Conditions: 150 mM KOAc, 10 mM MgCl2 and 150 mM bicine (pH 8.5), 24 C. An RNA of 207 nucleotides, treated with 2A3 and DMS and read out base by base. The DMS profile rests on 3,096 reads. The 2A3 profile rests on 3,843 reads. For DMS the reverse transcriptase was MarathonRT.
RNA sequence: GGGAACGACUCGAGUAGAGUCGAAAAGAUUCCUCGUUGUUGAGCGAGGUUUAAACAAAUCGACCACACAAACGUAGAGCCGACUACGGAUUUAUAAAUUAAGGCAUUAAGUGUGAUACGGAGACAAAAAACGAUGUUGUGUUCGCACAACAUCGAACAGACUUAAAACGUUCGCGUUUUAAGUCUGAAAAGAAACAACAACAACAAC
Reactivity to 2A3 in 0.01 (KOAc 150mM, MgCl2 10mM, bicine 150mM(pH8.5), 24C), signal-to-noise 5, nucleotides 027 to 156: g080a120u170u120c000c010u010c000g000u000u020g000u000u000g000a000g010c010g020a000g010g010u040u090u050a030a020a010c070a000a010a010u000c000g010a000c000c000a000c000a010c010a030a140a020c000g010u000a000g000a010g010c000c010g040a010c000u010a000c010g020g000a010u010u300u030a180u150a080a020a020u140u120a020a010g000g010c000a010u140u210a150a070g000u010g000u000g010a000u050a070c070g130g030a040g030a120c130a040a130a020a040a030a040c000g000a000u000g000u000u010g000u000g010u030u020c160g040c060a000c000a000a000c000a000u000c000g000a010a000
Reactivity to DMS in 0.01 (KOAc 150mM, MgCl2 10mM, bicine 150mM(pH8.5), 24C), signal-to-noise 2, nucleotides 027 to 156: g020a300u000u000c020c000u000c030g000u020u000g010u010u000g010a190g010c040g030a060g010g000u010u000u010a050a070a140c080a090a060a120u000c050g000a070c000c000a060c000a090c020a170a160a080c020g020u000a040g000a130g000c040c050g000a090c000u000a020c000g000g000a250u000u000u000a020u000a030a040a040u000u010a040a080g010g040c000a300u010u020a020a170g050u010g030u000g000a060u020a070c090g010g000a220g000a090c060a020a040a060a080a050a160c030g010a020u000g010u000u000g020u000g010u000u010c300g060c000a030c000a040a020c000a010u000c000g040a030a080